[RMDB]
RNA sequence: GGGAACGACUCGAGUAGAGUCGAAAAUGUAGCUGCAAUUGGAUCCACAGUCUCGAGUAAGACUGCAAUGAUAUUGAUCACAAUCAACCCCAUGAUGCCCCAAUCAAAUGCUGCACCAAGUCGCCCACCUAAUCGCGGGGCAAAUAUCUCAUAUGUAUCCUUCAUUCCGUUUCGACGGAAUGAAGGAAAAAGAAACAACAACAACAAC
Reactivity to 2A3 in 0.01 (KOAc 150mM, MgCl2 10mM, bicine 150mM(pH8.5), 24C), signal-to-noise 1, nucleotides 027 to 156: u080g050u010a000g000c010u030g020c000a020a040u040u010g000g030a040u040c020c110a060c000a050g000u000c000u000c010g220a180g030u240a060a020g030a000c000u000g060c030a030a130u130g110a060u080a060u270u140g010a030u140c010a040c090a130a030u070c040a060a050c000c060c000c000a040u100g010a010u070g060c000c000c080c000a050a010u000c090a080a000a010u090g030c040u010g040c020a050c060c030a080a000g110u130c130g050c000c000c080a020c000c020u060a130a120u100c040g020c050g030g000g000g000c030a000a000a000u040a000u030c080u030c160a120u300a070u280g100u040a030